[RMDB]
This 207-nucleotide RNA was probed chemically with 2A3 and DMS. Values cover nucleotides 27 to 156. The reactions ran in a buffer of 150 mM KOAc, 10 mM MgCl2 and 150 mM bicine (pH 8.5), at 24 C. 2A3 is a SHAPE reagent: it acylates the 2'-hydroxyl of flexible nucleotides of all four kinds. The DMS profile rests on 5,063 reads.
RNA sequence: GGGAACGACUCGAGUAGAGUCGAAAAGACUAGAUAAACUAUCAGUAAGUUUUAUAGAGAUAGACGAACAAUUAGCGUAUUGAGAAGCAUUUAGUGUAACGUAUUCGAUACAUUUUGUAUUAGAUUUACUAAUCGAUUUUGCAUACUCUAUAACACCAGCAUAUACUUCGUUCGCGAAGUAUAUGCUAAAAGAAACAACAACAACAAC
Reactivity to 2A3 in 0.01 (KOAc 150mM, MgCl2 10mM, bicine 150mM(pH8.5), 24C), signal-to-noise 6, nucleotides 027 to 156: g020a020c040u060a010g020a090u100a050a180a050c060u060a050u140c030a040g080u130a230a010g000u070u030u000u050a040u030a020g020a000g020a020u060a090g110a070c040g030a100a060c080a120a090u160u130a090g030c010g060u090a080u060u160g060a060g030a110a020g010c040a040u110u150u150a100g030u050g010u080a040a040c060g020u010a040u030u060c020g030a000u010a030c010a060u070u170u110u300g020u010a050u020u020a050g030a040u040u030u080a040c020u040a050a060u060c030g060a070u040u050u050u070g000c000a010u030a120c000u010c000u030a010u040a070a040c070a010c080c010
Reactivity to DMS in 0.01 (KOAc 150mM, MgCl2 10mM, bicine 150mM(pH8.5), 24C), signal-to-noise 3, nucleotides 027 to 156: g000a200c050u000a070g020a150u000a060a100a130c060u010a300u000c040a130g020u000a100a120g010u010u010u010u010a040u000a070g010a070g020a150u000a110g010a140c040g020a060a040c040a040a070u010u010a020g020c010g010u010a030u010u030g000a120g000a090a250g000c000a020u000u000u000a070g010u000g000u000a050a070c060g030u000a180u000u020c030g020a100u000a020c000a150u000u000u000u000g030u000a070u010u000a090g010a090u000u010u000a070c030u000a030a030u000c020g020a120u000u000u000u020g000c020a090u000a090c030u000c010u000a020u000a040a060c070a050c090c030